[RMDB]
RNA sequence: GGGAACGACUCGAGUAGAGUCGAAAAGCGUAUAACUUCGGUUAUACGCAAAAACCGUAGGGCUAUCUGUCGGGAGACGGAAUUUCGAAAGAGAUUCAACGUCGAAGAACGACAGAGUAGCCCUAAACGGAAAAAUGUGACGUUUCGACGUCACAAACUUAAUGUGUCAGUUCGCUGACACAUUAAGAAAAGAAACAACAACAACAAC
Reactivity to DMS in 0.01 (KOAc 150mM, MgCl2 10mM, bicine 150mM(pH8.5), 24C), signal-to-noise 2, nucleotides 027 to 156: g010c000g000u000a000u000a020a010c010u000u000c300g050g010u000u000a000u000a030c000g060c000a000a030a040a070a060c000c010g040u020a020g000g000g030c000u010a040u000c020u010g020u000c010g000g000g000a250g000a030c010g010g010a040a000u000u000u000c000g010a200a170a270g000a020g000a000u000u010c000a010a090c020g020u000c000g000a080a190g030a190a260c000g030a020c000a000g000a070g020u010a010g000c010c000c000u000a000a010a000c030g030g010a030a070a040a190a090u000g040u000g000a030c010g030u010u000u000c300g020a130c010g010u000c010a000c000a020a040a100
Reactivity to 2A3 in 0.01 (KOAc 150mM, MgCl2 10mM, bicine 150mM(pH8.5), 24C), signal-to-noise 2, nucleotides 027 to 156: g000c010g000u010a000u010a020a010c000u030u070c180g050g000u000u010a000u010a010c000g000c010a040a010a000a000a060c000c000g010u010a000g010g000g020c000u000a010u030c000u030g010u010c010g000g010g030a070g000a000c000g010g020a000a000u010u010u010c030g030a100a080a050g020a020g010a000u020u020c090a300a200c080g000u000c000g020a060a010g000a020a030c000g000a000c000a000g010a010g000u000a000g000c010c010c000u010a000a000a010c010g030g060a160a070a020a000a030u100g000u010g010a000c000g000u050u170u200c290g040a040c010g000u000c000a000c000a010a000a000